This 177-nucleotide RNA was probed chemically with DMS and 2A3. For DMS, 1,060 sequencing reads were counted. The RNA was probed in 150 mM KOAc, 10 mM MgCl2 and 150 mM bicine (pH 8.5) at 24 C. For 2A3 the reverse transcriptase was SuperScript II with manganese. Reactivities are given for positions 27 through 126. It was measured as part of the RMDB library OK2TST. DMS adducts were read by reverse transcription with MarathonRT.
RNA sequence: GGGAACGACUCGAGUAGAGUCGAAAAAGUGACUGAGCAAACCCAUGCAACUGUAAUCCAAAAAGGAAGUGAUGCUACUUAAUCUGCUUAAUAAGCCUAUAGGAUUGUUGCAAAUCCUACCUUAAAGUCCCCAUUAAGCAUUCGUGCUUAAUGGGGAAAAAGAAACAACAACAACAAC
Reactivity to DMS in 0.01 (KOAc 150mM, MgCl2 10mM, bicine 150mM(pH8.5), 24C), signal-to-noise 2, nucleotides 027 to 126: a070g000u000g010a130c070u020g010a130g000c040a070a080a140c080c040c040a090u020g010c020a020a020c070u010g000u010a070a050u000c070c040a000a110a080a090a080g000g020a070a070g040u000g020a150u000g020c040u000a030c070u000u010a080a070u000c120u020g000c000u000u050a090a050u000a170a090g000c030c130u000a070u000a080g000g000a000u000u000g000u000u000g000c110a080a090a060u000c030c040u000a070c130c030u020u020a030a080a090g020
Reactivity to 2A3 in 0.01 (KOAc 150mM, MgCl2 10mM, bicine 150mM(pH8.5), 24C), signal-to-noise 1, nucleotides 027 to 126: a010g090u040g030a050c120u100g040a000g140c000a030a020a100c000c000c000a010u030g000c000a010a010c010u020g080u230a000a040u000c010c000a030a000a000a050a000g030g010a010a030g000u000g080a010u050g010c020u040a050c000u110u050a100a000u120c090u080g070c010u050u040a080a020u040a170a060g010c000c040u080a070u070a080g040g000a010u000u030g010u050u020g000c000a000a000a070u070c040c000u040a130c010c000u090u140a030a040a110g080